[RMDB]
RNA sequence: GGGAACGACUCGAGUAGAGUCGAAAACUGCAAAGGCACGUGUUGAGUGCUAUGACAGGUUUAAAGUUAAUGAGACAAAUUCUCAAUAUUUGUUUAGUACUAUUAAUGCUCUACCAGAAACUUCUGCAACCGGCGGAGUUCGCUCCGCCGAAAAGAAACAACAACAACAAC
Reactivity to DMS in 0.01 (KOAc 150mM, MgCl2 10mM, bicine 150mM(pH8.5), 24C), signal-to-noise 2, nucleotides 027 to 129: c020u030g020c050a000a240a170g080g070c050a010c060g000u050g050u060u040g040a110g040u060g010c000u050a050u090g030a200c050a020g000g000u000u270u000a050a150a120g000u030u030a060a140u050g000a070g010a010c060a000a000a000u010u020c120u060c290a040a000u050a020u000u000u000g050u100u000u030a120g000u040a140c000u050a070u020u040a060a020u020g000c060u030c030u030a000c020c000a060g040a000a000a000c210u010u000c060u030g040c060a080a000c060
Reactivity to 2A3 in 0.01 (KOAc 150mM, MgCl2 10mM, bicine 150mM(pH8.5), 24C), signal-to-noise 4, nucleotides 027 to 129: c000u000g000c010a010a000a140g050g000c020a010c080g190u240g100u130u270g130a110g020u000g000c000u000a040u020g030a040c020a030g020g000u000u110u090a090a000a010g010u060u060a110a000u120g090a000g000a080c000a030a000a000u180u020c150u020c140a100a050u150a040u110u000u020g020u000u020u040a040g010u030a020c060u080a070u150u030a060a070u080g000c000u040c010u040a020c000c000a010g020a060a060a000c000u000u020c020u070g060c000a040a030c080